[RMDB]
RNA sequence: GGGAACGACUCGAGUAGAGUCGAAAAACUUUCUGGGACCCCAGGUCUGUGCCAAUUAUCAAAGGUAAUGAUAGCUAUGAAGUAAUCAUACGAGACAACAUCUUGAUUCUUAAUCAGGCAAGAAGAGCUAUCGUAUACGGUUCGCCGUAUACGAUAGAAAAGAAACAACAACAACAAC
Reactivity to DMS in 0.01 (KOAc 150mM, MgCl2 10mM, bicine 150mM(pH8.5), 24C), signal-to-noise 3, nucleotides 027 to 126: a150c100u000u000u010c040u000g020g000g010a140c060c040c020c060a090g010g000u000c010u010g000u000g010c130c130a060a050u000u000a070u000c050a020a120a080g020g010u000a060a150u010g000a070u000a150g000c110u010a040u010g010a030a160g030u000a110a100u000c020a030u000a050c050g010a120g020a090c070a040a040c140a190u000c000u000u000g000a060u000u000c050u000u000a080a080u000c110a020g000g010c070a050a070g000a080a090g000a080g000
Reactivity to 2A3 in 0.01 (KOAc 150mM, MgCl2 10mM, bicine 150mM(pH8.5), 24C), signal-to-noise 3, nucleotides 027 to 126: a010c030u090u110u070c040u090g050g000g080a090c020c040c000c030a050g050g010u020c020u020g030u050g040c010c040a030a060u090u060a060u130c060a190a060a050g080g000u080a130a060u020g050a030u050a050g020c030u020a050u100g070a110a080g080u240a140a090u040c020a020u020a050c060g030a030g050a070c040a050a000c020a050u000c020u020u040g010a010u090u010c010u020u020a060a090u060c000a020g040g000c050a040a020g090a060a040g040a030g060

An RNA of 177 nucleotides, treated with DMS and 2A3 and read out base by base. The data come from the RNA Mapping Database (RMDB), library OK2TRN. For 2A3 the reverse transcriptase was SuperScript II with manganese. The reactions ran in a buffer of 150 mM KOAc, 10 mM MgCl2 and 150 mM bicine (pH 8.5), at 24 C. The 2A3 profile rests on 2,117 reads. Values are in units of 0.01, from 0 to 300, in steps of 10.